[RMDB]
RNA sequence: GGGAACGACUCGAGUAGAGUCGAAAAUCCUCACGUUUCGACGUGAGGAGAACUCUAGCUAGGGAAGGGAACCCUCGGGAAGGGCUCCCAAGGCGAUCUCAACAAGGGCCAAAUUCGUUUGGCCCAACAUGCAUCUCCCUUUCGAGGGAGAUGCAUGAAAAGAAACAACAACAACAAC
Reactivity to 2A3 in 0.01 (KOAc 150mM, MgCl2 10mM, bicine 150mM(pH8.5), 24C), signal-to-noise 2, nucleotides 027 to 126: u000c000c000u000c000a010c000g000u000u060u090c240g100a010c000g000u000g010a020g000g000a020g000a030a040c020u030c010u010a050g110c030u000a000g040g050g110a090a130g070g010g020a040a040c000c030c010u020c070g250g040g070a130a000g000g000g000c020u040c000c020c010a000a000g060g000c040g010a050u010c020u030c030a030a190c070a080a170g000g000g020c000c010a000a020a040u070u100c130g080u050u040u000g000g020c000c000c030a000a000
Reactivity to DMS in 0.01 (KOAc 150mM, MgCl2 10mM, bicine 150mM(pH8.5), 24C), signal-to-noise 2, nucleotides 027 to 126: u010c000c000u000c000a000c000g000u000u000u020c140g050a030c010g020u000g000a000g050g000a010g030a080a030c000u010c020u000a030g020c110u000a140g000g010g000a170a170g000g000g010a050a070c060c030c010u000c040g000g020g090a240a050g000g010g000c010u000c000c000c010a030a040g000g000c020g000a070u000c020u000c040a100a120c300a080a070g000g000g030c000c010a010a010a100u000u010c270g000u000u000u010g020g010c000c000c000a010a010